[RMDB]
RNA sequence: GGGAACGACUCGAGUAGAGUCGAAAAUGCUACACCCACUACACGUAAUUACCGGUGUAGCUAGGGUAGUUACGACAACUGAUCCGAGAGGAUCUACAUUAAGGCGAAGGUGAAAUAUAGGUUAAUAGGCACCUGAAGCCGAUCCUAUUAACCAACAAUAUCGUGGUGAUUUCGAUCACCACGAUAUAAAAGAAACAACAACAACAAC
Reactivity to DMS in 0.01 (KOAc 150mM, MgCl2 10mM, bicine 150mM(pH8.5), 24C), signal-to-noise 2, nucleotides 027 to 156: u000g020c020u010a080c030a120c010c030c050a140c050u000a030c060a130c050g020u010a110a120u000u000a100c140c070g020g000u020g060u020a050g000c060u000a080g000g010g000u010a020g040u000u010a050c020g040a150c070a120a150c070u010g000a040u000c030c020g020a300g010a270g020g000a000u000c000u030a110c080a140u000u030a090a150g040g030c050g000a180a040g000g020u010g010a120a110a140u000a130u010a110g030g030u000u000a000a000u000a000g030g010c090a100c020c010u000g000a050a190g020c050c050g010a000u000c010c000u000a000u000u000a010a050c000c000a120a050c110a060
Reactivity to 2A3 in 0.01 (KOAc 150mM, MgCl2 10mM, bicine 150mM(pH8.5), 24C), signal-to-noise 3, nucleotides 027 to 156: u130g010c040u050a030c020a120c020c020c000a030c040u050a030c050a010c020g100u110a150a130u170u120a140c150c070g130g010u040g020u020a010g010c020u030a040g000g000g020u020a040g030u070u130a060c070g030a040c060a190a030c110u080g000a000u000c000c000g020a020g010a030g060g000a000u000c000u010a020c010a080u130u140a070a030g010g010c050g050a040a010g000g010u060g080a060a130a020u250a050u120a140g010g000u010u000a000a000u000a000g000g030c000a010c070c040u040g080a030a000g000c000c010g020a000u020c010c000u000a000u000u000a020a010c020c010a000a030c010a030